[RMDB]
RNA sequence: GGGAACGACUCGAGUAGAGUCGAAAAUCUUAUCCCGAGGCUCCGCAGGCCACGGUGAUGGUGCGUCACAUGACUUCUGAGGAAGAGGCUAUUCGGGUGGUUGAUUGGGCGGCCCCUAUUGAUACCACGUUUAAGAACGGUUCGCCGUUCUUAAACGAAAAGAAACAACAACAACAAC
Reactivity to 2A3 in 0.01 (KOAc 150mM, MgCl2 10mM, bicine 150mM(pH8.5), 24C), signal-to-noise 1, nucleotides 027 to 126: u020c010u080u100a060u060c020c010c000g010a060g020g000c010u040c160c040g040c090a050g040g020c000c070a020c030g000g080u100g040a080u060g080g110u130g050c050g010u060c050a020c010a220u130g040a050c030u020u000c000u090g020a040g070g000a080a010g050a100g050g090c030u040a070u100u100c000g040g080g000u050g030g010u090u050g070a170u030u090g010g040g020c000g030g100c000c000c000c000u060a090u050u200g050a040u050a080c010c000a070
Reactivity to DMS in 0.01 (KOAc 150mM, MgCl2 10mM, bicine 150mM(pH8.5), 24C), signal-to-noise 2, nucleotides 027 to 126: u010c070u000u000a090u000c000c000c000g010a090g030g020c030u010c030c070g020c090a120g010g000c030c020a070c090g010g010u000g010a060u000g020g020u000g000c070g030u000c040a070c080a080u000g010a090c020u000u000c030u010g000a130g000g000a160a060g010a110g000g010c040u000a060u000u000c070g000g010g020u000g010g010u000u010g010a090u000u000g000g010g000c080g000g000c100c020c010c020u000a080u000u010g000a130u000a110c110c050a190
Conditions: 150 mM KOAc, 10 mM MgCl2 and 150 mM bicine (pH 8.5), 24 C. This 177-nucleotide RNA was probed chemically with 2A3 and DMS. The 2A3 profile rests on 881 reads. For 2A3 the reverse transcriptase was SuperScript II with manganese. Values cover nucleotides 27 to 126.